RNA sequence: GGGAACGACUCGAGUAGAGUCGAAAAAAACUCACUGCAAAAUCACCACGACUCUUUCACCUACUGAGAUGAUUGACCGAGGUUUGGCCUUCCAUUUUUACUGAGAUUUGGCGAGACCGAAUGGAAGCGUCCGCACAGUAACUGCAGCUGCUAGGCCGAAUAGUGCCUUUUUCGAAAGGCACUAUUCAAAAGAAACAACAACAACAAC
Reactivity to 2A3 in 0.01 (KOAc 150mM, MgCl2 10mM, bicine 150mM(pH8.5), 24C), signal-to-noise 3, nucleotides 027 to 156: a030a000a000c040u050c030a030c020u060g000c020a100a040a010a200u100c030a060c070c020a030c010g070a050c040u040c030u070u120u060c070a070c020c020u150a120c080u120g080a060g050a240u050g020a040u040u060g040a030c010c010g020a070g000g010u030u070u090g030g000c000c000u000u040c010c000a030u010u030u040u060u190a100c060u110g070a050g040a300u090u180u170g050g010c040g010a040g010a070c040c030g020a050a040u040g030g020a020a030g030c060g040u060c040c010g000c010a070c010a030g030u060a060a030c030u040g000c040a010g000c000u050g040c050u100a010g060g000c050c020
Reactivity to DMS in 0.01 (KOAc 150mM, MgCl2 10mM, bicine 150mM(pH8.5), 24C), signal-to-noise 1, nucleotides 027 to 156: a050a030a130c040u010c020a060c110u010g000c050a030a060a090a080u000c030a040c000c060a080c050g000a090c050u000c010u000u010u000c030a050c000c010u010a200c130u020g030a100g000a060u000g010a060u000u000g050a070c030c010g030a150g040g010u000u000u010g030g030c010c010u010u020c000c010a030u000u000u000u020u050a240c110u010g030a120g020a270u000u010u010g020g000c100g020a120g030a140c070c020g030a060a010u000g010g010a100a080g020c100g010u000c040c080g000c080a090c060a060g010u010a050a080c060u010g000c030a090g010c050u000g010c010u000a100g020g010c100c070
Structure probing data (2A3 and DMS) for a 207-nucleotide construct. In probing experiments dimethyl sulfate is read out at A N1 and C N3, which are open when not base-paired. The 2A3 profile rests on 1,821 reads. The RNA was probed in 150 mM KOAc, 10 mM MgCl2 and 150 mM bicine (pH 8.5) at 24 C. It was measured as part of the RMDB library OK3TST.